[RMDB]
RNA sequence: GGGAACGACUCGAGUAGAGUCGAAAAAUGGUAGUUAGUCUACUCGCUAUCCUAGUUACUUUGGAGUAAUCUCAAGUGUGUGUAAACGGGCGAAAGUCUGUAAAAUACUGGGGACAUAGGGUCAACAAGAACUAGUAGACCUUCGGGUCUACUAGAAUCAUACAAUAACCUUCGGGUUAUUGUAUGAAAAAGAAACAACAACAACAAC
Reactivity to 2A3 in 0.01 (KOAc 150mM, MgCl2 10mM, bicine 150mM(pH8.5), 24C), signal-to-noise 5, nucleotides 027 to 156: a000u080g020g010u010a030g010u100u070a050g050u070c020u040a030c010u050c030g020c020u050a030u090c020c020u030a060g040u060u060a060c030u060u060u150g050g020a040g030u080a050a130u010c020u010c060a030a050g010u010g010u010g000u000g020u090a080a100a060c020g010g020g000c030g040a050a010a000g000u000c020u020g040u070a060a060a040a010u090a050c040u040g010g000g010g020a000c010a040u080a030g060g000g010u060c010a020a040c020a120a050g070a080a030c010u000a000g010u000a000g000a000c000c000u010u040c140g110g000g010u000c000u000a000c000u000a000g000a000a000
Reactivity to DMS in 0.01 (KOAc 150mM, MgCl2 10mM, bicine 150mM(pH8.5), 24C), signal-to-noise 4, nucleotides 027 to 156: a100u000g010g010u010a050g040u000u010a080g020u020c020u000a020c020u000c060g010c040u000a080u000c010c020u000a080g020u000u000a060c060u000u000u010g020g010a140g000u000a040a100u000c030u000c010a050a080g020u010g010u010g030u000g030u000a050a120a100c050g020g010g010c000g010a150a080a170g020u000c010u000g010u000a050a070a100a050u000a030c030u010g010g030g020g010a070c070a080u010a060g010g010g010u000c050a040a090c080a040a110g010a080a200c010u000a010g010u000a020g010a030c000c000u010u000c300g030g020g040u000c010u000a000c000u000a000g010a050a090